RNA sequence: GGGAACGACUCGAGUAGAGUCGAAAAGUAGAUAGUGCAAAACAUUUACUCAUUCAGUACAAGCAGAACAGCAAGGAAAAACUACAGCUUGUUCCUGAGUUGUUCAAGCCUGGACUAACUGAAGAUAGAGGUUUUGAUUGGGCAUUUUUAGAAAAUACCUGAUUAAAUUAUUCGUAAUUUAAUCAGGAAAAGAAACAACAACAACAAC
Reactivity to DMS in 0.01 (KOAc 150mM, MgCl2 10mM, bicine 150mM(pH8.5), 24C), signal-to-noise 2, nucleotides 027 to 156: g040u000a040g040a080u030a120g070u000g050c080a070a090a170a210c010a020u000u000u000a030c030u000c050a150u010u010c030a030g010u000a100c000a060a060g060c020a300g000a030a050c020a050g000c080a090a080g020g000a040a040a090a040a050c070u010a190c170a130g030c140u010u000g010u000u000c010c030u010g010a210g070u000u000g020u010u010c020a080a120g050c020c010u010g010g000a050c060u010a000a090c020u000g000a030a160g000a150u020a080g010a150g010g010u000u000u010u000g000a100u000u020g010g010g060c030a050u010u000u000u010u010a100g000a060a050a070a080u010a070
Reactivity to 2A3 in 0.01 (KOAc 150mM, MgCl2 10mM, bicine 150mM(pH8.5), 24C), signal-to-noise 3, nucleotides 027 to 156: g020u040a000g000a060u080a080g050u070g070c040a030a040a090a040c020a010u040u050u080a030c010u030c050a100u060u010c000a000g000u010a020c000a040a000g000c010a010g010a020a020c000a000g000c010a030a020g000g010a020a050a030a090a020c050u190a080c030a070g040c060u030u060g040u070u050c000c000u100g050a120g190u030u000g000u000u020c010a040a040g000c010c020u060g060g010a030c040u060a040a010c010u070g000a000a000g010a030u120a060g080a030g020g000u060u070u060u100g040a040u020u050g020g010g000c010a020u070u090u020u030u170a010g040a010a050a010a090u300a020

An RNA of 207 nucleotides, treated with DMS and 2A3 and read out base by base. For DMS, 2,145 sequencing reads were counted. It was measured as part of the RMDB library OK3TST. For 2A3, 1,369 sequencing reads were counted. 2A3 adducts were read by reverse transcription with SuperScript II with manganese. In probing experiments dimethyl sulfate is read out at A N1 and C N3, which are open when not base-paired. For DMS the reverse transcriptase was MarathonRT.